Chemical mapping of a 177-nucleotide RNA with 2A3 and DMS. DMS adducts were read by reverse transcription with MarathonRT. The RNA was probed in 150 mM KOAc, 10 mM MgCl2 and 150 mM bicine (pH 8.5) at 24 C. The 2A3 profile rests on 861 reads. Values cover nucleotides 27 to 126.
[RMDB]
RNA sequence: GGGAACGACUCGAGUAGAGUCGAAAAAUCUACCAAUGUACACUGUGCAGCUGAUAUAUGGAUAACAAAGGCAUACAAUAAAGCAUACCCUAACAGCAAUGUGUAUACGAAGGGUCUGGUCCACUCACAUGCACUCGGAUUUCGAUCCGAGUGCAUGAAAAGAAACAACAACAACAAC
Reactivity to 2A3 in 0.01 (KOAc 150mM, MgCl2 10mM, bicine 150mM(pH8.5), 24C), signal-to-noise 1, nucleotides 027 to 126: a040u000c040u000a050c000c030a020a090u060g010u060a000c030a000c090u020g110u060g130c040a020g000c000u040g050a000u010a000u040a020u190g010g090a040u030a240a110c060a040a040a040g070g020c010a040u110a140c070a020a180u150a220a130a000g000c000a010u040a060c020c000c020u020a040a010c020a030g000c000a020a100u080g030u010g010u010a040u010a060c050g090a150a030g040g030g030u090c030u000g050g060u050c010c030a090c020u030c010a030
Reactivity to DMS in 0.01 (KOAc 150mM, MgCl2 10mM, bicine 150mM(pH8.5), 24C), signal-to-noise 2, nucleotides 027 to 126: a030u010c030u020a090c070c020a060a070u010g010u000a050c020a040c040u020g000u000g010c180a110g010c040u020g000a090u030a080u000a110u020g020g000a100u000a000a100c100a070a070a050g000g030c010a060u010a030c110a060a070u000a120a090a160g020c060a050u010a040c040c030c000u010a050a080c100a050g010c050a120a100u010g000u000g010u000a030u000a060c160g000a070a100g010g000g000u000c040u080g010g010u000c040c020a110c150u010c130a160